[RMDB]
RNA sequence: GGGAACGACUCGAGUAGAGUCGAAAAUCGUCCUCGAGUUUCUUGAUGGUUCUCCUGCUCUUCCGGAGCUUUCUUUCGAGGUCUUCCGCGUCUUUUCUUGCUUGGAUCCAUUUCUCGAGGACGUCCUCAAGUGACAUGUUCGCAUGUCACAAAAGAAACAACAACAACAAC
Reactivity to DMS in 0.01 (KOAc 150mM, MgCl2 10mM, bicine 150mM(pH8.5), 24C), signal-to-noise 9, nucleotides 027 to 129: u090c030g010u010c000c000u020c020g010a030g020u070u060u060c160u060u070g000a070u000g000g050u030u050c070u010c020c040u030g000c020u020c070u040u020c040c030g020g000a070g000c100u020u060u020c030u040u120u070c110g010a070g020g030u010c060u040u010c000c000g030c150g030u040c060u050u090u040u030c090u040u030g020c030u000u000g000g000a060u040c050c040a040u030u020u040c000u010c020g010a030g000g000a000c000g000u020c000c000u030c110a080a040
Reactivity to 2A3 in 0.01 (KOAc 150mM, MgCl2 10mM, bicine 150mM(pH8.5), 24C), signal-to-noise 9, nucleotides 027 to 129: u110c000g000u000c000c000u000c000g000a010g010u090u150u080c160u140u190g030a030u020g010g000u130u070c050u030c040c020u030g020c010u020c020u180u040c040c030g020g000a010g000c000u030u130u020c030u050u190u120c100g040a030g000g040u010c040u080u020c020c010g040c080g070u030c060u040u170u080u030c080u090u090g020c020u040u070g010g010a030u070c010c000a020u060u050u020c000u000c000g000a000g000g000a000c000g010u000c000c000u050c040a080a050
This 170-nucleotide RNA was probed chemically with DMS and 2A3. Conditions: 150 mM KOAc, 10 mM MgCl2 and 150 mM bicine (pH 8.5), 24 C. 2A3 adducts were read by reverse transcription with SuperScript II with manganese.